Source: RMDB library OK3TST, as collected in RNAgym. An RNA of 207 nucleotides, treated with 2A3 and read out base by base.
RNA sequence: GGGAACGACUCGAGUAGAGUCGAAAAGAAGGUGGGUCAGGGCUCGGACCGCACCAAUUAGAUGUAACUAUUGCGAGCCCAUUAAUGGCGUUUUCGCCUAGGUCAGAGCACGCCGUGGCUCGACCGAAAUAAAUAAAUAAUAACACGGCGGAUAGAAGGAUAUUAGGACUUUCGAGUCCUAAUAUCCAAAAGAAACAACAACAACAAC
Reactivity to 2A3 in 0.01 (KOAc 150mM, MgCl2 10mM, bicine 150mM(pH8.5), 24C), signal-to-noise 2, nucleotides 027 to 156: g130a110a030g000g010u010g000g040g000u000c010a050g010g000g030c000u000c000g040g000a010c000c000g110c010a000c000c000a000a020u060u100a090g080a090u060g070u160a080a070c080u140a170u210u150g000c000g000a000g000c000c000c000a000u000u100a020a070u020g000g000c060g090u050u080u170u280c020g040c030c000u000a020g000g000u000c020a080g000a000g000c000a010c030g000c000c000g000u030g000g000c000u000c030g000a000c000c000g030a000a040a000u040a000a000a000u110a040a030a030u300a040a070u090a000a000c000a000c000g000g000c150g000g040a040u080a050g090a170a040